[RMDB]
RNA sequence: GGGAACGACUCGAGUAGAGUCGAAAACGCUGGGCGUUGAAAUGCUUGGAUUUAAUCUGGGAGGAGGUGCUGAAGCGCGCACGGCACCUCCGAGGAUCAGAUUUGUCAGCAUCGUACGCGCCUGUGCUGAAGCGCGCACGGCAACCGAAAGGUGCGAGAUAACAUCUCUGUUCGCAGAGAUGUUAUCAAAAGAAACAACAACAACAAC
Reactivity to DMS in 0.01 (KOAc 150mM, MgCl2 10mM, bicine 150mM(pH8.5), 24C), signal-to-noise 2, nucleotides 027 to 156: c030g040c020u000g020g000g030c020g000u020u000g000a160a080a050u000g010c000u000u010g040g000a090u000u000u020a030a050u000c000u000g020g050g000a060g060g020a070g010g030u000g020c010u000g000a060a070g020c010g020c030g010c000a300c010g000g030c030a000c000c010u010c010c000g010a040g010g000a030u010c000a060g020a040u000u010u000g030u000c040a080g000c000a020u010c020g020u000a120c120g030c020g000c020c000u010g000u010g050c020u000g000a090a050g020c030g010c010g010c020a300c000g000g000c000a080a140c040c010g000a080a110a170g010g040u000g010c000g000a200
Reactivity to 2A3 in 0.01 (KOAc 150mM, MgCl2 10mM, bicine 150mM(pH8.5), 24C), signal-to-noise 3, nucleotides 027 to 156: c050g010c000u050g000g010g000c030g020u110u160g100a100a110a020u030g000c030u090u240g200g000a020u090u150u220a010a010u000c000u000g000g000g000a010g000g000a000g000g000u000g000c000u030g020a180a030g000c000g000c000g000c000a010c000g000g000c000a000c000c020u000c000c000g000a020g010g000a000u000c000a010g000a000u000u010u020g030u010c050a020g020c000a010u030c060g120u090a050c150g000c000g000c000c000u010g020u020g000c000u030g010a130a030g000c010g000c000g000c000a000c010g000g000c010a020a020c040c010g050a110a020a020g000g020u020g020c020g010a140